[RMDB]
RNA sequence: GGGAACGACUCGAGUAGAGUCGAAAAGGUCUAACCUUCGGGUUAGACCAAAAUAAGAGCAAAGCGUAGCUCAGCUGCAAACGCAAAAAGCAGGAAAGCGAAAAACCCGCCAGUUCGCUGGCGGGAACAUAUCUGUGUUGUUCGCAACACAGAUAUGAAAAGAAACAACAACAACAAC
Reactivity to 2A3 in 0.01 (KOAc 150mM, MgCl2 10mM, bicine 150mM(pH8.5), 24C), signal-to-noise 2, nucleotides 027 to 126: g000g000u020c010u000a000a010c000c010u020u090c270g000g000g010u000u000a000g000a000c000c000a000a000a000a000u010a010a020g010a000g000c010a010a180a040g070c030g130u140a010g000c010u020c040a080g020c000u020g000c020a100a090a090c070g000c050a100a180a000a000a000g000c000a000g030g050a150a020a000g020c030g080a070a020a030a070a060c010c010c000g000c000c000a010g020u060u080c160g020c110u000g020g000c000g000g000g000a000a010
Reactivity to DMS in 0.01 (KOAc 150mM, MgCl2 10mM, bicine 150mM(pH8.5), 24C), signal-to-noise 3, nucleotides 027 to 126: g000g000u000c000u010a000a010c010c010u000u000c170g030g000g010u000u000a000g000a010c000c010a010a010a040a060u000a090a150g000a010g010c020a120a080a120g010c050g010u010a120g010c000u000c010a160g030c020u000g000c020a030a120a080c140g010c150a050a060a060a130a100g000c030a010g000g000a090a050a050g010c010g000a070a070a080a160a120c000c000c000g010c000c010a000g010u000u010c190g020c000u010g000g020c010g000g010g010a000a040
Structure probing data (2A3 and DMS) for a 177-nucleotide construct. The RNA was probed in 150 mM KOAc, 10 mM MgCl2 and 150 mM bicine (pH 8.5) at 24 C. The data come from the RNA Mapping Database (RMDB), library M2PK50. DMS adducts were read by reverse transcription with MarathonRT.